An RNA of 177 nucleotides, treated with 2A3 and DMS and read out base by base. Values cover nucleotides 27 to 126. Values are in units of 0.01, from 0 to 300, in steps of 10. For DMS, 2,754 sequencing reads were counted. High DMS reactivity at an A or C suggests that its Watson-Crick edge is free. The reactions ran in a buffer of 150 mM KOAc, 10 mM MgCl2 and 150 mM bicine (pH 8.5), at 24 C. For 2A3 the reverse transcriptase was SuperScript II with manganese.
RNA sequence: GGGAACGACUCGAGUAGAGUCGAAAAGAAAGAAAGAAUUCAUUCUUCACUCUCCCUCAAGGGCUUCUGUGUGUUUUUUGGUCGAAAGACCAAUUCAGAGGUCCUGUAGGGAGAGUGGAUAAUAUAAGUUAAAAAUGCCAUUCGUGGCAUUUUUAACAAAAGAAACAACAACAACAAC
Reactivity to 2A3 in 0.01 (KOAc 150mM, MgCl2 10mM, bicine 150mM(pH8.5), 24C), signal-to-noise 2, nucleotides 027 to 126: g060a020a040a010g090a030a060a010g080a050a040u180u090c050a040u040u010c070u020u020c000a000c000u000c000u000c000c010c000u000c040a030a010g010g010g000c010u030u000c000u010g040u010g030u000g210u110u060u040u060u090u070g020g000u000c010g040a090a010a020g000a000c000c000a000a000u040u010c000a000g010a010g010g000u010c000c000u000g010u040a000g000g000g000a000g010a000g000u000g000g000a000u000a000a000u040a000u030a060a010
Reactivity to DMS in 0.01 (KOAc 150mM, MgCl2 10mM, bicine 150mM(pH8.5), 24C), signal-to-noise 2, nucleotides 027 to 126: g020a090a100a070g010a160a100a100g000a140a090u040u040c130a040u000u010c050u000u000c000a000c020u000c000u010c010c000c000u030c150a200a010g010g000g000c000u020u000c000u000g010u030g010u020g020u000u050u030u050u040u000g040g010u000c000g000a120a050a190g000a020c000c000a000a010u020u010c000a030g000a020g020g010u010c010c010u000g020u060a030g000g010g000a000g000a000g010u000g010g000a030u010a030a010u040a090u010a090a150